[RMDB]
The record gives the reactivity of an RNA of 207 nucleotides to 2A3.
The 2A3 profile rests on 457 reads.
It was measured as part of the RMDB library OK3TST.
As a SHAPE reagent, 2A3 marks flexible, mostly unpaired nucleotides at the ribose 2'-OH.
RNA sequence: GGGAACGACUCGAGUAGAGUCGAAAACUGGGCAUGCGCGAGGACAGGCUCUCACCGGAAGUCUCCAUGAACGCAACGAUGCUACGUGUCGAUCAUGAGCGUCUGUUCCUUCGGGAACUCGUGUACCGCGAGCUGACUCUGGCGCCGAGGGACGUGCACGGACUCACCAAUUCGUUGGUGAGUCCGUAAAAGAAACAACAACAACAAC
Reactivity to 2A3 in 0.01 (KOAc 150mM, MgCl2 10mM, bicine 150mM(pH8.5), 24C), signal-to-noise 1, nucleotides 027 to 156: c030u030g000g080g040c070a040u130g000c170g060c050g020a110g070g040a000c000a010g050g040c060u010c000u000c010a080c030c210g030g140a090a040g010u040c060u000c160c050a140u110g110a070a020c030g000c070a040a070c100g070a090u110g020c090u170a150c110g030u070g100u070c030g040a070u060c000a000u130g010a000g030c000g020u090c000u080g030u250u150c000c000u100u090c060g000g000g000a000a000c000u000c110g090u070g030u090a090c030c100g030c030g000a000g000c040u070g060a070c000u000c000u070g040g040c040g000c000c030g110a070g010g060g010a010c080g010u000g000c000